Source: RMDB libraries RFM100 and RFMREP, as collected in RNAgym. This 177-nucleotide RNA was probed chemically with 2A3 and DMS. As a SHAPE reagent, 2A3 marks flexible, mostly unpaired nucleotides at the ribose 2'-OH.
RNA sequence: GGGAACGACUCGAGUAGAGUCGAAAAGCUCAGCGGGCAUGCGUGCCCGUGUACUCCCCCAUGCUCCGGGCCAGCAUCAGUUCUGGCGGUUGGUUAAAGGCCUCUGGAAUGUAUCGUCCUCCGGGACAACAUAGCCCUUCUUCGGAAGGGCUAUGUUAAAAGAAACAACAACAACAAC
Reactivity to 2A3 in 0.01 (KOAc 150mM, MgCl2 10mM, bicine 150mM(pH8.5), 24C), signal-to-noise 2, nucleotides 027 to 126: g000c010u020c090a020g000c000g000g000g000c030a030u090g000c060g170u070g000c030c010c000g000u000g000u000a000c040u110c000c000c000c000c000a030u080g010c010u010c030c020g080g060g030c020c000a030g030c020a080u120c050a080g050u140u030c010u010g000g010c000g010g050u000u030g010g010u010u070a010a110a020g050g000c000c000u020c000u000g020g040a040a020u090g060u150a090u140c060g000u020c000c000u010c040c110g050g000g000a000c010
Reactivity to DMS in 0.01 (KOAc 150mM, MgCl2 10mM, bicine 150mM(pH8.5), 24C), signal-to-noise 3, nucleotides 027 to 126: g000c040u010c050a190g020c030g020g010g020c000a020u000g030c210g090u010g010c010c000c000g040u000g020u020a120c170u000c010c020c000c000c050a090u030g000c010u020c030c010g010g010g010c020c040a030g000c090a110u010c180a070g000u020u010c010u010g000g000c020g020g010u030u000g000g020u030u010a080a070a180g000g000c010c010u000c020u020g020g010a050a070u010g000u000a100u020c070g000u000c010c010u010c140c030g000g000g010a010c050